[RMDB]
RNA sequence: GGGAACGACUCGAGUAGAGUCGAAAAGGGGCUGUCCUGGUUUCGACGUGGGUUCGGGACCGGUGUGGUGCAUGUCGAGCUUGAGUGACGCUCGUAAAUCUCCAUUCAAAAAACUAACUGCAAACGACGAACGUUUCGCACUCGCCGCUUAAAUCCGCUAUCAAAAUCUGUUCGCAGAUUUUGAUAGAAAAGAAACAACAACAACAAC
Reactivity to 2A3 in 0.01 (KOAc 150mM, MgCl2 10mM, bicine 150mM(pH8.5), 24C), signal-to-noise 5, nucleotides 027 to 156: g030g010g000g000c040u050g020u070c020c020u040g000g050u020u020u040c040g020a040c050g040u190g080g090g010u080u040c000g010g000g020a010c010c020g040g000u050g010u020g020g010u020g000c040a030u100g030u090c000g010a010g010c010u060u070g020a020g040u050g020a040c070g010c020u000c010g050u060a040a040a070u030c020u000c020c000a020u040u060c030a070a040a040a050a050a080c070u100a060a050c050u070g040c050a040a060a040c020g110a010c040g040a190a030c020g020u030u050u040c060g000c000a020c000u040c020g020c010c000g020c040u050u100a050a060a050u020c010c010g000
Reactivity to DMS in 0.01 (KOAc 150mM, MgCl2 10mM, bicine 150mM(pH8.5), 24C), signal-to-noise 1, nucleotides 027 to 156: g010g000g040g070c040u010g020u000c020c080u010g040g030u000u010u030c030g050a020c070g000u010g040g030g000u010u010c000g010g020g010a020c050c020g000g030u000g040u000g030g000u000g000c050a090u010g000u000c040g010a060g000c020u000u020g010a130g000u000g010a110c080g020c030u000c020g000u000a040a040a090u000c040u000c020c010a100u010u010c070a000a060a060a110a120a070c080u000a050a120c090u000g050c040a070a070a060c050g000a080c020g020a020a090c040g000u010u010u000c060g050c050a060c030u000c010g030c020c020g030c060u000u000a040a070a100u010c040c020g000
Source information:
The data come from the RNA Mapping Database (RMDB), library ARCHII. Structure probing data (2A3 and DMS) for a 207-nucleotide construct. The RNA was probed in 150 mM KOAc, 10 mM MgCl2 and 150 mM bicine (pH 8.5) at 24 C. For DMS, 3,196 sequencing reads were counted. As a SHAPE reagent, 2A3 marks flexible, mostly unpaired nucleotides at the ribose 2'-OH.